[RMDB]
RNA sequence: GGGAACGACUCGAGUAGAGUCGAAAAGUGUCUCAGUGUUCAUCCCCUGAUCAAGGAUGCCCGAAACGGUGAGGCGGAAAGCAAAUUAAAUAACGUCAACCCAUCGGGACGGUUGGCCAGUUAAGAAAAAACCGGGGAGUCUUCGGACUCCCCGGAACAAUCCGCCUUAGUUCGCUAAGGCGGAUUGAAAAGAAACAACAACAACAAC
Reactivity to 2A3 in 0.01 (KOAc 150mM, MgCl2 10mM, bicine 150mM(pH8.5), 24C), signal-to-noise 1, nucleotides 027 to 156: g030u030g020u000c030u030c110a150g120u130g000u230u030c020a060u030c070c000c000c040u040g000a080u040c030a000a000g020g000a010u000g060c000c040c000g030a080a060a050c050g020g000u030g000a110g040g010c040g040g040a040a200a000g040c020a000a060a120u170u200a040a120a110u210a040a100c050g000u000c000a000a000c000c030c020a020u020c040g000g000g060a060c070g010g060u010u020g000g040c030c010a040g000u000u080a100a040g020a070a150a020a000a000a040c010c000g020g010g000g000a000g000u010c010u050u070c090g010g010a000c000u110c010c000c000c020g000g000a000a000